An RNA of 177 nucleotides, treated with DMS and read out base by base. Values cover nucleotides 27 to 126. Conditions: 150 mM KOAc, 10 mM MgCl2 and 150 mM bicine (pH 8.5), 24 C. DMS adducts were read by reverse transcription with MarathonRT.

RNA sequence: GGGAACGACUCGAGUAGAGUCGAAAAUCUAUCAAAUUCGUUUGAUAGAAAACCCGCCGUAGGGACCAAGAUCGAGCUACGGACAUCUAAGAGUGCAAAUAAACAGCCCCCCAUUCGUGGGGGGCAAGUUCGUUAUGAAUUUCGAUUCAUAACGAACAAAAGAAACAACAACAACAAC
Reactivity to DMS in 0.01 (KOAc 150mM, MgCl2 10mM, bicine 150mM(pH8.5), 24C), signal-to-noise 1, nucleotides 027 to 126: u000c000u000a000u000c000a010a020a020u010u030c170g000u010u000u020g010a000u000a030g010a080a040a130a200c010c010c010g000c010c030g030u010a000g000g000g020a100c100c070a140a130g000a040u000c090g000a300g000c040u000a050c040g000g000a050c100a030u000c040u010a070a060g000a030g030u000g010c150a090a090a050u020a060a050a130c160a140g010c000c000c000c000c000c000a030u000u010c120g010u000g020g060g000g000g000g000c000a000a000